[RMDB]
RNA sequence: GGGAACGACUCGAGUAGAGUCGAAAACUGCUAGCUGCAGAGGCGCUACCGCAGUUCAGGCUUCCCAACAGGUUAGCUAGCCUAGGAUCCACCCGGUAUUUCGCAGGAAGGGGGGGGGGGCGUUGAGCGGUGCAAAGGAUUUCGAUCCUUUGCACCGAAAAGAAACAACAACAACAAC
Reactivity to 2A3 in 0.01 (KOAc 150mM, MgCl2 10mM, bicine 150mM(pH8.5), 24C), signal-to-noise 1, nucleotides 027 to 126: c040u030g000c010u010a020g000c000u090g070c060a010g030a100g300g000c000g030c000u050a040c000c120g000c000a000g000u010u010c030a040g040g000c000u080u000c030c030c000a000a020c050a050g070g000u050u100a010g010c070u030a000g040c040c000u010a030g090g000a040u000c030c000a050c020c030c020g000g000u120a110u020u090u070c020g010c060a030g000g090a080a010g000g000g000g000g000g000g000g000g000g000g000c020g020u030u020g010a010g030
Reactivity to DMS in 0.01 (KOAc 150mM, MgCl2 10mM, bicine 150mM(pH8.5), 24C), signal-to-noise 2, nucleotides 027 to 126: c040u000g000c070u010a010g000c030u030g100c040a210g030a120g030g020c030g000c040u020a060c060c010g000c010a040g050u000u020c120a100g090g000c060u010u000c000c000c070a150a100c170a000g000g010u020u020a050g000c100u040a070g020c020c030u000a220g000g020a130u000c030c020a060c050c050c020g040g000u000a060u000u000u020c040g030c070a040g030g000a040a070g020g000g000g000g000g000g000g000g000g000g000c040g030u020u000g020a060g010